[RMDB]
RNA sequence: GGGAACGACUCGAGUAGAGUCGAAAAGAUAUGGAGCCUAAGGCCAUCGAUCUAUGAAAUACGGAUAGUACUAUUCGGAAACGAAUAGUACUAUCCCACUCAUAGGGAGGCUAUGGCUCCUAAGUCACUGUCAUGAUUUGUUCGCAAAUCAUGACAGAAAAGAAACAACAACAACAAC
Reactivity to DMS in 0.01 (KOAc 150mM, MgCl2 10mM, bicine 150mM(pH8.5), 24C), signal-to-noise 1, nucleotides 027 to 126: g030a040u000a300u050g000g010a000g000c000c000u010a100a170g000g000c000c000a260u000c300g000a050u000c040u000a000u000g000a010a040a220u000a190c300g000g000a030u000a000g060u030a000c000u000a000u000u000c010g000g000a120a120a290c000g060a040a000u000a030g000u030a000c000u000a000u000c000c000c040a000c240u000c000a030u000a030g040g000g000a030g030g010c000u000a300u000g000g000c000u040c000c000u010a000a010g000u000c010a210